[RMDB]
RNA sequence: GGGAACGACUCGAGUAGAGUCGAAAAGACCUAUCGCUGUUAUCUAUCGACGGAGCUAGGUGCGUAUGAGGUGGCUUAUGCGAUUACGGUACACAAAAGUCAGGGAUCGGAGUAUGAGAACGUGGCGGAUUGUAUGGCAGUUCGCUGCCAUACAAUCAAAAGAAACAACAACAACAAC
Reactivity to DMS in 0.01 (KOAc 150mM, MgCl2 10mM, bicine 150mM(pH8.5), 24C), signal-to-noise 3, nucleotides 027 to 126: g020a120c030c000u000a060u000c050g030c040u000g000u010u000a060u010c110u020a090u000c070g000a060c050g010g000a090g010c090u000a060g010g000u010g030c080g040u020a060u010g020a070g020g020u000g010g020c030u000u000a050u010g000c040g020a080u000u010a070c110g000g030u010a060c060a060c110a040a030a090a070g000u000c040a080g010g000g010a070u000c070g010g010a060g010u000a030u000g010a080g010a040a080c080g030u000g010g000c120g020
Reactivity to 2A3 in 0.01 (KOAc 150mM, MgCl2 10mM, bicine 150mM(pH8.5), 24C), signal-to-noise 2, nucleotides 027 to 126: g040a020c010c000u000a050u080c080g000c020u010g030u060u030a090u060c070u020a110u120c070g050a030c040g040g010a020g020c030u050a030g010g080u030g100c030g000u080a100u080g060a060g070g070u040g030g000c040u110u090a040u150g060c030g000a010u050u070a030c090g010g090u100a080c090a000c000a090a130a020a020g030u040c010a000g080g000g000a010u040c050g010g010a050g040u090a120u140g080a070g010a080a020c050g050u060g050g000c020g020